This 207-nucleotide RNA was probed chemically with 2A3. The RNA was probed in 150 mM KOAc, 10 mM MgCl2 and 150 mM bicine (pH 8.5) at 24 C.
RNA sequence: GGGAACGACUCGAGUAGAGUCGAAAACUGGGCAGAGCUGUCUGCCCGGAGGCGGGAGAGUCCGUUCUGAAGUGUCCCGGCUAUAAUAAAUCGAUCUUUGCGGGCAGCCCGUUGGCAGGAGGCGUGAGGAAUCCGUCUCUCUGUCUGGUGCGGCAAGGCUAUAAGAUAGCUUCGGCUAUCUUAUAGCAAAAGAAACAACAACAACAAC
Reactivity to 2A3 in 0.01 (KOAc 150mM, MgCl2 10mM, bicine 150mM(pH8.5), 24C), signal-to-noise 2, nucleotides 027 to 156: c000u040g000g000g010c000a000g000a040g040c170u130g070u170c000u000g020c010c010c000g000g000a010g010g010c060g000g040g000a160g020a020g020u020c030c060g030u100u010c040u100g040a050a030g040u020g080u090c000c040c000g020g040c050u050a030u090a300a030u110a070a060a080u130c070g060a060u050c050u090u090u120g010c060g020g010g000c000a020g020c000c000c000g080u130u050g010g000c000a000g010g020a000g000g000c020g070u300g030a070g010g120a110a080u070c000c000g020u000c000u010c000u040c000u000g000u020c080u100g060g020u140g050c040g010g000c020a000a100g090